[RMDB]
RNA sequence: GGGAACGACUCGAGUAGAGUCGAAAAGGGUUAGCGUUCGCGCUAACCCCAGGAUCGAACAUGUCAAAUCUCGGAGACAUGAAACGAUCAAAAGCGAGAAAACUAGACAGUCAUUCGUGACUGUCAAGUCACACAUGAACUUCGGUUCAUGUGUGACAAAAGAAACAACAACAACAAC
Reactivity to DMS in 0.01 (KOAc 150mM, MgCl2 10mM, bicine 150mM(pH8.5), 24C), signal-to-noise 2, nucleotides 027 to 126: g000g000g000u010u000a010g000c000g080u010u010c280g010c000g050c000u000a000a000c010c000c010c020a010g010g000a000u000c000g020a200a300c000a000u000g010u010c000a040a120a130u000c110u030c230g080g000a300g000a000c000a010u000g000a020a070a090c010g010a000u000c010a080a010a110a060g000c160g020a090g000a060a030a100a070c140u000a090g020a040c020a000g000u000c000a020u000u020c120g000u000g010a000c000u020g010u000c010a010a050
Reactivity to 2A3 in 0.01 (KOAc 150mM, MgCl2 10mM, bicine 150mM(pH8.5), 24C), signal-to-noise 2, nucleotides 027 to 126: g000g010g010u000u000a000g020c000g010u020u050c200g020c010g020c130u010a000a000c020c000c010c000a090g140g020a000u000c010g010a010a020c020a000u000g000u000c020a080a130a240u120c140u100c210g170g030a150g010a040c030a000u020g010a040a000a020c030g000a000u010c020a100a000a000a030g140c100g040a070g170a060a110a010a080c080u080a040g030a010c000a000g000u000c020a000u040u070c180g120u070g010a000c000u000g000u000c000a000a000
Conditions: 150 mM KOAc, 10 mM MgCl2 and 150 mM bicine (pH 8.5), 24 C. Chemical mapping of a 177-nucleotide RNA with DMS and 2A3. For DMS, 1,002 sequencing reads were counted. 2A3 adducts were read by reverse transcription with SuperScript II with manganese. The 2A3 profile rests on 1,815 reads.